[RMDB]
RNA sequence: GGGAACGACUCGAGUAGAGUCGAAAAUCAAUGAUAGUCCGGCCUUAGCUAAUGCUAAUGUUGCAAUUGCCGUUGGUAGUGGAACGGAUGUUGCCAUUGAAGUUUCAGACAUAGUUUUAGUUAAAAAAGCAGUUUAUAGAUUCGUCUAUAAACUGCUAAAAGAAACAACAACAACAAC
Reactivity to DMS in 0.01 (KOAc 150mM, MgCl2 10mM, bicine 150mM(pH8.5), 24C), signal-to-noise 3, nucleotides 027 to 126: u000c060a050a060u010g000a100u010a140g020u010c030c010g000g020c060c050u000u000a090g010c010u000a050a050u010g010c030u000a030a030u000g010u000u000g020c060a100a040u000u000g010c060c030g010u000u000g010g010u000a080g020u000g010g000a030a040c010g000g000a050u010g000u000u000g020c030c070a080u010u000g010a050a140g010u000u000u000c050a120g000a040c060a070u010a070g000u000u000u000u010a070g010u000u020a010a050a060a090a120
Reactivity to 2A3 in 0.01 (KOAc 150mM, MgCl2 10mM, bicine 150mM(pH8.5), 24C), signal-to-noise 2, nucleotides 027 to 126: u020c000a000a110u070g040a070u050a020g070u040c020c020g020g010c040c040u010u040a010g000c020u010a120a020u140g020c000u050a080a120u030g060u090u140g020c020a100a070u020u170g060c000c030g030u030u050g020g070u100a080g060u050g090g040a070a080c020g000g010a020u050g010u030u060g010c030c030a060u050u100g040a080a020g090u040u130u130c070a030g020a040c050a080u050a060g010u010u050u000u080a010g000u060u050a100a090a000a010a010

Source: RMDB library OK2TST, as collected in RNAgym. An RNA of 177 nucleotides, treated with DMS and 2A3 and read out base by base. DMS adducts were read by reverse transcription with MarathonRT. The 2A3 profile rests on 1,647 reads. The RNA was probed in 150 mM KOAc, 10 mM MgCl2 and 150 mM bicine (pH 8.5) at 24 C. For DMS, 5,575 sequencing reads were counted.